[RMDB]
Structure probing data (DMS and 2A3) for a 177-nucleotide construct. It was measured as part of the RMDB library TTRDEL. For DMS the reverse transcriptase was MarathonRT. The reactions ran in a buffer of 150 mM KOAc, 10 mM MgCl2 and 150 mM bicine (pH 8.5), at 24 C. For 2A3, 24,826 sequencing reads were counted. 2A3 adducts were read by reverse transcription with SuperScript II with manganese.
RNA sequence: GGGAACGACUCGAGUAGAGUCGAAAAGAUAUGGAGAACUACUCCCGCCCUUCAACAGCUAGAUCGGAAACGAUCUAGACAUGAAGUAACAAGGAGCUCCUAAGUCAAACAUGGGUUCGCCCAUGAACCCAUGGUGAUAGUUCGCUAUCACCAUGGGAAAAGAAACAACAACAACAAC
Reactivity to DMS in 0.01 (KOAc 150mM, MgCl2 10mM, bicine 150mM(pH8.5), 24C), signal-to-noise 8, nucleotides 027 to 126: g010a040u010a300u010g000g000a020g000a090a050c060u010a300c010u000c010c000c030g010c300c200c000u000u000c000a040a100c290a160g000c000u000a000g010a000u000c000g010g000a130a090a200c010g020a010u000c000u000a000g010a030c090a150u000g000a020a010g000u010a060a130c130a170a040g000g000a020g000c020u000c010c000u000a070a120g020u000c040a120a080a200c020a010u000g000g000g010u010u010c230g000c000c010c020a010u000g000a040a120
Reactivity to 2A3 in 0.01 (KOAc 150mM, MgCl2 10mM, bicine 150mM(pH8.5), 24C), signal-to-noise 8, nucleotides 027 to 126: g020a010u090a060u250g040g020a030g000a100a080c100u210a060c010u230c010c000c020g030c020c020c000u010u010c060a170a150c030a080g030c000u000a000g000a000u010c010g010g010a060a050a060c010g000a000u000c000u000a000g010a000c000a070u080g010a010a010g040u190a120a100c100a110a090g020g000a010g010c010u020c000c020u040a190a050g060u070c070a120a110a150c010a070u010g000g000g050u070u090c280g110c050c010c000a000u010g030a040a070